[RMDB]
RNA sequence: GGGAACGACUCGAGUAGAGUCGAAAAGUUUAGAAGUUCGCUUCUAAACAAAUAGAUGGUACCUAUCAACCUUAUAUGUAGCUACCCAUGUAAGGUUGACAAAAACGUCCUCGUUCGCGAGGACGAACUUUCACCGUAAGUUCGCUUACGGUGAAAGAAAAGAAACAACAACAACAAC
Reactivity to DMS in 0.01 (KOAc 150mM, MgCl2 10mM, bicine 150mM(pH8.5), 24C), signal-to-noise 2, nucleotides 027 to 126: g000u000u000u000a000g030a020a020g040u020u010c230g040c010u010u000c000u010a000a000a010c000a040a070a100u010a090g020a110u000g030g010u010a110c010c020u010a110u000c000a000a000c000c000u000u000a010u000a000u010g020u000a120g020c060u010a020c060c060c010a000u010g000u010a000a010g010g010u000u000g010a020c230a010a040a050a080a110c010g000u000c000c010u000c000g020u000u000c210g010c000g010a020g010g010a000c000g010a010a040
Reactivity to 2A3 in 0.01 (KOAc 150mM, MgCl2 10mM, bicine 150mM(pH8.5), 24C), signal-to-noise 2, nucleotides 027 to 126: g000u010u000u000a000g010a030a010g000u070u150c210g020c130u000u000c000u010a000a000a010c000a020a170a000u140a020g140a100u120g060g030u100a070c000c010u050a050u050c000a020a000c000c000u010u010a010u000a000u010g050u050a040g010c030u050a030c010c000c000a000u010g010u010a000a000g000g000u000u000g000a000c010a000a070a010a010a030c030g000u000c000c000u000c000g020u050u050c280g010c000g090a000g000g010a000c000g000a000a010

An RNA of 177 nucleotides, treated with DMS and 2A3 and read out base by base. It was measured as part of the RMDB library M2PK50. Reactivities are given for positions 27 through 126. DMS adducts were read by reverse transcription with MarathonRT. 2A3 adducts were read by reverse transcription with SuperScript II with manganese. For 2A3, 4,309 sequencing reads were counted. Conditions: 150 mM KOAc, 10 mM MgCl2 and 150 mM bicine (pH 8.5), 24 C.